[RMDB]
RNA sequence: GGGAACGACUCGAGUAGAGUCGAAAAGUCGAAUGCGGAAAUCGAAUAUUUAGUAUCCGAUGAUCAUUUCGCCGUGGACUCGAACGGAAUCAUUGUGAACAACAAGCAACUGGAUGCGGACAACAACACUAAGACGUGCAUUCGUGCACGUCUUAGUAAAAGAAACAACAACAACAAC
Reactivity to 2A3 in 0.01 (KOAc 150mM, MgCl2 10mM, bicine 150mM(pH8.5), 24C), signal-to-noise 1, nucleotides 027 to 126: g040u020c010g060a140a010u080g010c060g040g110a000a150a010u030c040g020a070a000u020a090u150u300u150a150g010u030a100u000c010c020g000a000u040g000a050u040c070a070u070u040u110c060g000c030c030g020u090g070g040a050c080u020c060g020a040a010c030g080g050a050a030u110c040a010u030u070g060u050g050a000a000c000a000a000c000a050a070g070c020a040a060c030u040g070g010a050u050g040c000g000g030a000c010a020a000c010a010a010c010
Reactivity to DMS in 0.01 (KOAc 150mM, MgCl2 10mM, bicine 150mM(pH8.5), 24C), signal-to-noise 2, nucleotides 027 to 126: g030u000c030g000a090a090u000g000c000g020g010a030a120a080u000c020g020a010a000u000a030u000u020u000a110g000u010a030u000c030c030g000a030u000g040a080u020c160a160u000u000u000c050g030c030c090g040u000g040g000a090c030u000c050g010a090a050c130g010g000a130a060u020c040a030u000u000g000u000g000a060a160c120a050a050c080a030a150g000c030a050a080c060u040g030g000a120u000g010c030g000g020a010c040a020a030c160a080a050c120
Chemical mapping of a 177-nucleotide RNA with 2A3 and DMS. The RNA was probed in 150 mM KOAc, 10 mM MgCl2 and 150 mM bicine (pH 8.5) at 24 C. The DMS profile rests on 1,290 reads. DMS adducts were read by reverse transcription with MarathonRT.